[RMDB]
RNA sequence: GGGAACGACUCGAGUAGAGUCGAAAAGAUAUGGAGAGGCUUCUCCUAGAGUAACCCGUUGAACCCAUGUCGGAAACGACAUGCUCAGCGUGUGCCUACCUCUAAGGAGAGAGCCUCUCCUAAGUCAGGUAGCUAUUAUCUUCGGAUAAUAGCUACCAAAAGAAACAACAACAACAAC
Reactivity to DMS in 0.01 (KOAc 150mM, MgCl2 10mM, bicine 150mM(pH8.5), 24C), signal-to-noise 2, nucleotides 027 to 126: g000a090u000a300u000g000g010a000g000a020g000g000c020u020u000c000u000c010c010u000a040g010a040g000u000a140a110c070c040c000g010u010u000g000a020a030c100c300c050a020u020g000u000c030g030g010a150a150a230c030g020a000c000a000u000g010c210u000c000a000g000c000g000u020g050u010g090c120c060u000a190c300c030u010c000u000a090a130g020g010a040g020a060g010a020g030c010c000u000c000u010c000c000u000a010a080g010u000c040a050
Reactivity to 2A3 in 0.01 (KOAc 150mM, MgCl2 10mM, bicine 150mM(pH8.5), 24C), signal-to-noise 1, nucleotides 027 to 126: g000a000u050a070u270g000g010a010g010a010g030g020c030u000u000c000u010c020c000u010a000g000a000g020u030a030a020c000c010c010g020u010u010g010a030a050c100c000c000a000u010g000u060c010g000g000a110a100a090c000g000a000c000a000u010g010c020u010c010a010g020c030g030u210g100u170g220c010c040u130a170c090c020u040c010u070a230a240g000g000a030g030a060g020a010g010c020c000u010c000u000c000c000u000a010a000g010u010c050a020
Notes:
Structure probing data (DMS and 2A3) for a 177-nucleotide construct. For DMS the reverse transcriptase was MarathonRT.